[RMDB]
RNA sequence: GGGAACGACUCGAGUAGAGUCGAAAAUGUGUAGAGCCAUUAGCUUGUCUACGGAAAAUAAUAAAUCAAAUCAUUAAACAUGUCAAAUUAUAAGCAAAUGAUUCUAGUCUCAUUGACAAUUACUCAAACUAAUAUGGUUCUCCUAUCAGGAAUGUACCCUACGCUGAAACUUCGGUUUCAGCGUAGGAAAAGAAACAACAACAACAAC
Reactivity to 2A3 in 0.01 (KOAc 150mM, MgCl2 10mM, bicine 150mM(pH8.5), 24C), signal-to-noise 2, nucleotides 027 to 156: u130g060u010g000u030a020g000a000g000c000c010a020u000u050a030g010c000u010u060g000u020c020u010a040c020g020g010a040a040a000a000u180a040a040u160a030a050a060u110c040a000a000a100u020c030a030u020u140a150a120a030c060a070u110g020u070c020a020a090a130u190u220a140u150a200a060g090c020a070a000a000u030g010a020u030u000c030u160a050g000u030c020u000c050a100u070u000g000a000c000a000a070u140u090a080c060u050c180a010a130a030c030u050a010a120u070a070u070g030g030u000u000c010u060c010c010u080a090u070c020a010g150g000a100a030u300g000u300a020c100